[RMDB]
RNA sequence: GGGAACGACUCGAGUAGAGUCGAAAAAGACACACCUUAACCCUAGCGGGGGUCGCUAGGGUGAAAUCACACCACGUGAUGGGAGUACGACCUGAUAGGGCGCUGCAGAGGCCCACUAUUAGGCUAGCUUCAUGCAAUACUUCGGUAUUGCAUGAAGAAAAGAAACAACAACAACAAC
Reactivity to 2A3 in 0.01 (KOAc 150mM, MgCl2 10mM, bicine 150mM(pH8.5), 24C), signal-to-noise 2, nucleotides 027 to 126: a020g130a030c000a010c000a040c110c010u060u110a010a000c000c000c010u000a000g030c000g070g110g050g210g100u180c010g000c000u000a000g000g010g010u010g000a000a010a010u000c010a020c020a020c150c060a080c110g030u030g030a040u040g070g000g000a060g020u050a110c090g040a220c000c000u010g000a000u010a010g020g000g010c130g000c060u040g000c050a070g030a050g300g060c020c000c000a020c000u020a000u030u030a000g020g040c040u040a030g050
Reactivity to DMS in 0.01 (KOAc 150mM, MgCl2 10mM, bicine 150mM(pH8.5), 24C), signal-to-noise 2, nucleotides 027 to 126: a080g010a090c060a060c070a210c030c030u000u000a170a040c010c000c000u000a000g020c040g000g030g030g010g010u000c020g030c000u000a020g010g030g030u000g000a030a060a030u000c030a030c010a200c150c070a120c150g000u010g000a060u000g020g000g010a120g030u010a060c120g000a130c010c000u000g000a000u010a000g020g000g010c300g000c000u000g030c300a080g000a190g000g000c010c010c020a070c000u000a000u000u000a020g000g010c020u000a090g020
Structure probing data (2A3 and DMS) for a 177-nucleotide construct. For DMS, 1,396 sequencing reads were counted. The reactions ran in a buffer of 150 mM KOAc, 10 mM MgCl2 and 150 mM bicine (pH 8.5), at 24 C.